The record gives the reactivity of an RNA of 177 nucleotides to 2A3 and DMS.
RNA sequence: GGGAACGACUCGAGUAGAGUCGAAAAGAACCGCGAUUCGUCGCGGUUCGAGCGCCGUAGCGCGCAACGGCGUAACGGCAGCAUUAGCGCGCAGCUCCCGACGAUCGGGUGGUUUCGACCACCCGAAUCUUGCGUAGUUAUUCGUAACUACGCAAGAAAAAGAAACAACAACAACAAC
Reactivity to 2A3 in 0.01 (KOAc 150mM, MgCl2 10mM, bicine 150mM(pH8.5), 24C), signal-to-noise 3, nucleotides 027 to 126: g010a000a000c000c000g000c000g010a020u030u060c180g020u010c000g130c000g020g010u000u000c000g000a010g000c000g000c020c020g030u040a050g020c020g010c010g000c060a060a030c030g030g020c020g040u060a140a060c070g120g020c050a030g000c010a120u050u180a050g020c010g000c010g000c020a020g010c030u020c000c020c000g100a160c090g040a150u070c010g010g020g000u000g000g010u010u040u140c170g070a030c000c000a000c020c000c000g000a000a000
Reactivity to DMS in 0.01 (KOAc 150mM, MgCl2 10mM, bicine 150mM(pH8.5), 24C), signal-to-noise 5, nucleotides 027 to 126: g000a010a000c000c000g020c010g010a030u000u010c180g010u000c010g020c010g010g000u000u000c010g000a140g000c020g010c010c020g010u000a070g010c010g010c010g000c010a050a030c070g000g010c000g020u000a120a100c130g000g000c080a070g000c130a090u000u000a100g000c030g010c020g030c010a250g000c050u000c000c010c010g010a110c210g010a130u000c010g000g000g030u000g010g010u000u000u020c220g020a030c010c000a000c000c000c000g010a000a020
For 2A3 the reverse transcriptase was SuperScript II with manganese.
The RNA was probed in 150 mM KOAc, 10 mM MgCl2 and 150 mM bicine (pH 8.5) at 24 C.
It was measured as part of the RMDB library M2PK50.